[RMDB]
Annotation
The record gives the reactivity of an RNA of 207 nucleotides to DMS and 2A3. The 2A3 profile rests on 5,667 reads. The RNA was probed in 150 mM KOAc, 10 mM MgCl2 and 150 mM bicine (pH 8.5) at 24 C. For DMS the reverse transcriptase was MarathonRT.
RNA sequence: GGGAACGACUCGAGUAGAGUCGAAAAGUGGAAGCUCCUUCUCUCGCAAUGUGUAACUCAUGAUUCUCAUGACCCCUGGUUGGAGAGAUCCGGACUAGGAGCCAGGGGGCCUCUGAUUCUGCCAGCCAAAACUGUCGUAAGUUCGCUUACGACAGAACAAUAUAGCUAGGUUCGCCUAGCUAUAUUGAAAAGAAACAACAACAACAAC
Reactivity to DMS in 0.01 (KOAc 150mM, MgCl2 10mM, bicine 150mM(pH8.5), 24C), signal-to-noise 2, nucleotides 027 to 156: g030u010g010g010a100a120g010c010u000c020c040u010u010c000u000c010u000c000g030c090a050a080u000g000u000g030u000a070a040c070u000c010a060u010g000a130u010u000c050u000c020a120u010g020a080c030c000c010c000u000g020g050u000u000g000g000a070g020a250g010a150u000c000c020g000g010a100c060u000a100g000g010a070g010c010c010a090g000g000g030g040g010c050c010u000c010u000g000a150u000u020c010u010g010c010c030a090g010c030c010a050a070a060a160c000u000g020u000c000g010u000a010a030g000u000u000c300g030c010u000u000a000c000g020a000c000a000g010a020a080
Reactivity to 2A3 in 0.01 (KOAc 150mM, MgCl2 10mM, bicine 150mM(pH8.5), 24C), signal-to-noise 5, nucleotides 027 to 156: g060u050g020g000a060a020g030c050u040c020c000u030u020c010u000c000u020c020g040c080a050a110u080g090u030g030u140a070a040c010u010c040a030u060g060a150u200u040c070u020c060a040u090g070a120c000c000c010c010u020g020g040u040u080g070g030a100g010a020g000a110u020c030c020g070g070a090c070u100a060g050g000a010g000c010c000a000g000g010g000g000g000c000c010u020c010u000g010a100u100u030c010u040g020c000c010a020g000c030c010a050a070a100a120c010u000g000u000c000g000u000a000a000g000u030u110c150g010c150u000u000a000c000g000a000c000a000g000a000a000